[RMDB]
RNA sequence: GGGAACGACUCGAGUAGAGUCGAAAACUCGCGCGAACAUGGAGGCGUGGAGCGCGACAUGAAUCAGCCUCAAUUAGAUUAAUGGUCGACAGAUCAGCGGCGAUCAGCGACCCAAUUAGAAGCCGCCACCGGAAGAGGAGACGCUCGACGGACGUCACGAUAUAUAUAGGUUCGCCUAUAUAUAUCGAAAAGAAACAACAACAACAAC
Reactivity to 2A3 in 0.01 (KOAc 150mM, MgCl2 10mM, bicine 150mM(pH8.5), 24C), signal-to-noise 8, nucleotides 027 to 156: c020u010c010g000c000g000c000g090a280a030c020a040u080g090g010a000g020g020c020g000u010g010g030a080g010c010g000c020g030a050c050a150u260g090a090a110u140c060a050g010c000c000u020c000a020a100u160u170a040g100a100u050u150a100a080u170g000g000u000c010g030a100c060a090g020a010u000c020a020g020c020g030g010c030g010a000u010c010a000g030c000g010a010c000c000c010a040a060u160u040a090g050a190a020g010c000c010g020c000c020a060c010c030g020g020a070a050g020a060g070g040a070g020a050c050g030c070u030c030g040a040c030g060g030a110c020g020u040c020a010
Reactivity to DMS in 0.01 (KOAc 150mM, MgCl2 10mM, bicine 150mM(pH8.5), 24C), signal-to-noise 3, nucleotides 027 to 156: c040u000c010g000c010g030c010g030a100a130c050a080u010g010g020a070g010g030c020g010u000g010g010a270g000c000g010c000g030a040c110a100u040g010a100a120u000c050a100g000c010c000u000c030a090a150u010u000a100g000a080u000u000a080a130u000g000g030u000c010g020a140c080a170g010a110u000c050a130g020c090g030g020c000g020a090u000c010a120g000c080g010a060c010c000c030a050a080u010u000a070g010a080a080g010c020c000g020c010c050a160c030c030g010g000a050a110g000a120g010g030a150g000a020c050g000c020u000c030g010a150c060g020g000a030c020g000u000c020a240